[RMDB]
RNA sequence: GGGAACGACUCGAGUAGAGUCGAAAAGGUGAUUGCAGCAGGGAAGCCACCUGGGCUACGAACGAUCAACGUGCUAUCGAGUUCAAUCCAGCGCACAUCAAUUGGCUCGCUUCGAUUCCAGUCGCGGGUCUCCGUUUUAUUUCGAUAAAACGGAGACAAAAGAAACAACAACAACAAC
Reactivity to 2A3 in 0.01 (KOAc 150mM, MgCl2 10mM, bicine 150mM(pH8.5), 24C), signal-to-noise 2, nucleotides 027 to 126: g040g000u030g010a160u110u110g040c100a100g020c020a010g120g000g040a090a010g010c020c010a100c020c130u080g040g020g000c010u040a060c070g030a090a010c020g030a070u100c030a060a100c070g040u100g030c030u080a050u150c080g020a060g030u020u100c010a010a040u030c020c030a000g000c020g000c020a000c000a060u020c040a040a130u030u050g030g000c000u000c020g040c000u040u100c020g130a150u110u080c060c020a000g060u050c030g000c050g100g140
Reactivity to DMS in 0.01 (KOAc 150mM, MgCl2 10mM, bicine 150mM(pH8.5), 24C), signal-to-noise 2, nucleotides 027 to 126: g030g010u000g000a130u000u000g010c050a030g040c090a110g000g000g000a110a070g020c060c030a090c130c070u010g000g020g000c040u010a070c140g000a030a080c060g000a130u000c050a080a120c070g000u000g020c070u010a100u010c070g000a080g000u000u020c100a080a230u000c040c020a030g020c040g030c040a060c030a060u000c080a080a240u010u020g000g000c020u000c010g000c050u000u000c030g000a130u000u020c140c110a120g000u000c060g030c050g010g000